The record gives the reactivity of an RNA of 207 nucleotides to DMS and 2A3. For DMS, 9,881 sequencing reads were counted. For 2A3, 15,693 sequencing reads were counted. Values are in units of 0.01, from 0 to 300, in steps of 10. High 2A3 reactivity points to a flexible backbone, as in loops and unpaired stretches.

RNA sequence: GGGAACGACUCGAGUAGAGUCGAAAAACGUACGUGAUCACGUGAUCUCGUGUGAGUGAUCGUUCACGAUCUCUCGUUCGAACGAGUGAUCUCUCUCACACGUACACUCACGUACGAACUCGUGAGAGUGAGUGAGAUCACGUGUGAACACUCACUCUACUAAAUCGGAUUUCGAUCCGAUUUAGUAAAAAGAAACAACAACAACAAC
Reactivity to DMS in 0.01 (KOAc 150mM, MgCl2 10mM, bicine 150mM(pH8.5), 24C), signal-to-noise 3, nucleotides 027 to 156: a090c030g030u000a010c050g010u010g000a060u000c030a070c030g000u000g010a070u000c030u000c000g010u000g000u000g010a040g010u000g010a070u000c100g000u010u000c100a120c030g010a050u000c040u000c030u010c000g020u010u010c200g000a080a110c000g010a050g040u000g010a040u000c040u000c010u000c020u000c000a030c000a050c020g010u010a080c030a100c080u000c020a030c000g000u000a300c010g000a080a060c100u000c040g040u000g010a120g010a040g000u010g000a070g010u000g000a130g000a090u010c020a020c020g030u000g010u010g000a180a150c020a030c010u010c000a040c030u000c000
Reactivity to 2A3 in 0.01 (KOAc 150mM, MgCl2 10mM, bicine 150mM(pH8.5), 24C), signal-to-noise 9, nucleotides 027 to 156: a000c040g020u070a010c020g000u010g010a020u090c030a010c050g010u020g030a100u020c040u030c090g000u010g000u010g010a010g010u060g050a180u150c140g110u170u190c120a070c160g010a030u000c050u000c000u000c030g030u120u190c200g070a210a100c010g000a020g000u040g020a020u010c010u000c010u000c000u000c020a000c000a000c010g010u050a030c040a010c040u020c000a010c010g010u010a000c010g010a020a020c030u050c070g050u090g090a060g000a000g020u010g010a020g000u020g010a050g000a040u030c000a010c040g020u050g030u020g030a040a010c010a010c010u010c010a020c010u020c010